[RMDB]
RNA sequence: GGGAACGACUCGAGUAGAGUCGAAAACAGCUGGUUCGCCAGCUGAAAAAUCCUAAGUCUACACGUCGUAUAUAGUUCCGAUAAGUCUCGGAAACGAGACUUUUGACGGAAGUAUACGAUAGUGUAGAUAUGGAAAAAACUAUGGUUCGCCAUAGAAUCACACGUUUAUAUUCGUAUAAACGUGUGAAAAAGAAACAACAACAACAAC
Reactivity to 2A3 in 0.01 (KOAc 150mM, MgCl2 10mM, bicine 150mM(pH8.5), 24C), signal-to-noise 3, nucleotides 027 to 156: c020a000g000c000u010g000g030u030u040c080g060c080c000a000g000c000u000g010a010a000a000a010a030u030c010c000u030a140a040g030u000c000u000a010c010a000c000g000u000c000g010u010a000u000a000u010a070g300u010u000c000c000g010a040u010a060a010g010u000c010u000c000g020g030a090a070a030c010g010a000g000a000c000u010u020u030u080g160a090c020g000g000a000a000g010u000a000u000a000c000g000a000u190a050g000u000g000u000a000g000a000u010a020u010g000g090a050a050a050a030a010a010c010u020a010u040g000g050u060u100c260g070c070c000a010u000a020g060a040a040
Reactivity to DMS in 0.01 (KOAc 150mM, MgCl2 10mM, bicine 150mM(pH8.5), 24C), signal-to-noise 2, nucleotides 027 to 156: c010a030g000c020u000g000g030u000u010c300g030c020c020a000g000c000u020g000a000a070a050a120a120u010c000c000u010a100a250g020u000c030u010a020c000a000c020g020u000c000g060u010a010u000a000u000a020g000u010u000c000c000g040a200u010a010a010g000u000c000u000c000g010g000a130a110a220c010g020a020g000a030c000u000u000u000u000g020a220c010g010g010a010a120g010u000a000u000a000c010g010a010u000a060g070u010g030u000a000g010a010u010a100u000g010g010a010a060a070a090a180a110c030u000a000u000g000g020u000u010c300g000c010c000a040u000a020g010a170a160
This 207-nucleotide RNA was probed chemically with 2A3 and DMS. The RNA was probed in 150 mM KOAc, 10 mM MgCl2 and 150 mM bicine (pH 8.5) at 24 C. The 2A3 profile rests on 4,716 reads. It was measured as part of the RMDB library RNAMAK.